This 177-nucleotide RNA was probed chemically with DMS and 2A3. The data come from the RNA Mapping Database (RMDB), library OK2TRN. For 2A3, 3,253 sequencing reads were counted. 2A3 adducts were read by reverse transcription with SuperScript II with manganese. For DMS, 4,133 sequencing reads were counted. The RNA was probed in 150 mM KOAc, 10 mM MgCl2 and 150 mM bicine (pH 8.5) at 24 C.
RNA sequence: GGGAACGACUCGAGUAGAGUCGAAAACUCAUCGCCAGCAGCGGCCAACAGCCCGCUUGUCGGGACGGCGGCCGCCGCAUUGGCAGCGGUCAGGGACGCGCCGAUGCCUGCAAGAUCCUCCGUGGCCAUGCUUAGGUUGAUUCGUCAACCUAAGCAUAAAAGAAACAACAACAACAAC
Reactivity to DMS in 0.01 (KOAc 150mM, MgCl2 10mM, bicine 150mM(pH8.5), 24C), signal-to-noise 4, nucleotides 027 to 126: c030u010c030a090u010c090g000c000c030a050g000c030a070g020c000g010g000c000c020a050a300c050a090g010c010c000c000g000c020u000u010g020u010c000g010g000g000a030c060g010g010c300g000g000c010c010g020c000c030g000c000a110u010u000g010g010c000a110g020c080g010g000u000c080a070g010g010g010a080c070g010c130g000c010c040g000a090u000g000c050c030u020g000c080a060a120g000a090u000c020c030u000c030c030g000u000g010g030c060c110
Reactivity to 2A3 in 0.01 (KOAc 150mM, MgCl2 10mM, bicine 150mM(pH8.5), 24C), signal-to-noise 1, nucleotides 027 to 126: c010u030c030a100u170c160g000c000c000a010g000c000a000g000c000g020g000c000c010a040a030c000a040g030c030c020c010g020c050u150u180g280u300c000g000g000g020a030c000g000g010c000g000g000c000c000g000c000c000g040c000a060u010u150g030g000c000a010g010c010g020g020u070c050a090g000g080g000a050c020g040c000g000c040c020g060a060u120g050c000c050u050g020c040a060a020g030a160u060c000c020u070c030c060g050u050g030g000c030c050